An RNA of 177 nucleotides, treated with 2A3 and DMS and read out base by base. Conditions: 150 mM KOAc, 10 mM MgCl2 and 150 mM bicine (pH 8.5), 24 C. Reactivities are given for positions 27 through 126.
RNA sequence: GGGAACGACUCGAGUAGAGUCGAAAAGCACGAGGAAAAAAUAAGCAAUCUCUGGAUGCGGUAGAAAAGGCAGCAUUCUUCGUGACGUUGGACGAAUCGGAACAGGGAUAUAGAGAGGAGGACCCUACCGCAUAUUUAAUUUCGAUUAAAUAUGCGGAAAAGAAACAACAACAACAAC
Reactivity to 2A3 in 0.01 (KOAc 150mM, MgCl2 10mM, bicine 150mM(pH8.5), 24C), signal-to-noise 2, nucleotides 027 to 126: g080c040a000c050g000a040g040g000a080a110a040a030a010a080u220a140a040g030c010a040a100u030c030u030c030u070g040g020a090u120g070c050g020g030u060a040g050a050a110a020a010g080g000c020a010g010c010a070u010u060c020u010u040c020g030u020g070a080c050g010u070u070g030g020a020c040g030a020a040u050c030g030g000a080a040c020a030g000g000g090a010u100a020u060a170g090a000g030a010g030g010a020g030g010a030c030c020c010u060a060
Reactivity to DMS in 0.01 (KOAc 150mM, MgCl2 10mM, bicine 150mM(pH8.5), 24C), signal-to-noise 4, nucleotides 027 to 126: g020c040a030c040g000a050g010g010a000a020a110a130a090a080u010a090a100g010c050a070a070u000c040u000c070u000g020g000a070u000g020c040g000g010u000a050g000a030a050a060a080g010g000c040a050g030c070a140u010u010c010u000u000c040g030u010g010a080c070g000u000u000g010g010a080c070g000a060a070u010c060g010g000a080a050c110a060g000g010g010a060u000a090u000a110g010a120g000a050g000g010a100g000g000a090c020c030c040u000a150